[RMDB]
RNA sequence: GGGAACGACUCGAGUAGAGUCGAAAACACAGAUUUCGUUUUUGGUGGAGAAAGGACAGAGCCAGAGGCUGGGCAGCGAGCGGGGCCUGCUCACCGCUUGGAGAUCUCCUGGUAGCGUAGCUGCAGCUUCCCCUGCAGGUCAUGCUGUGGGAAGAGACGCCUAAAUGAUAUUCGUAUCAUUUAGGCGAAAAGAAACAACAACAACAAC
Reactivity to DMS in 0.01 (KOAc 150mM, MgCl2 10mM, bicine 150mM(pH8.5), 24C), signal-to-noise 1, nucleotides 027 to 156: c050a120c070a130g000a080u000u000u000c040g010u000u000u000u000u000g010g030u000g010g000a140g010a080a150a120g000g000a110c070a110g020a190g030c030c020a030g000a060g040g030c090u010g010g000g030c050a040g000c010g000a050g010c070g030g000g040g000c200c020u000g000c010u000c040a050c000c020g020c030u020u020g020g030a130g020a080u000c030u000c090c000u010g010g020u000a030g030c030g040u010a100g010c010u020g020c020a070g000c050u000u000c040c050c020c000u000g010c020a010g000g010u000c140a100u010g000c000u000g010u020g010g010g010a020a050g000a230g010a110
Reactivity to 2A3 in 0.01 (KOAc 150mM, MgCl2 10mM, bicine 150mM(pH8.5), 24C), signal-to-noise 3, nucleotides 027 to 156: c040a000c010a010g130a110u050u200u160c090g020u080u060u040u110u140g130g010u060g030g030a060g040a060a110a070g040g000a030c050a100g020a010g050c010c010a020g020a020g080g000c100u020g010g000g010c030a010g010c010g020a020g040c030g040g040g020g000c010c020u020g000c010u040c010a030c010c020g010c060u030u100g020g000a030g020a080u020c020u030c010c000u010g040g030u040a010g010c020g010u030a020g030c020u030g010c020a030g020c000u010u000c000c000c000c020u020g000c000a000g020g100u130c040a080u050g020c000u020g000u150g010g000g000a010a010g000a010g010a020
The data come from the RNA Mapping Database (RMDB), library OK3TST. Structure probing data (DMS and 2A3) for a 207-nucleotide construct. For 2A3 the reverse transcriptase was SuperScript II with manganese.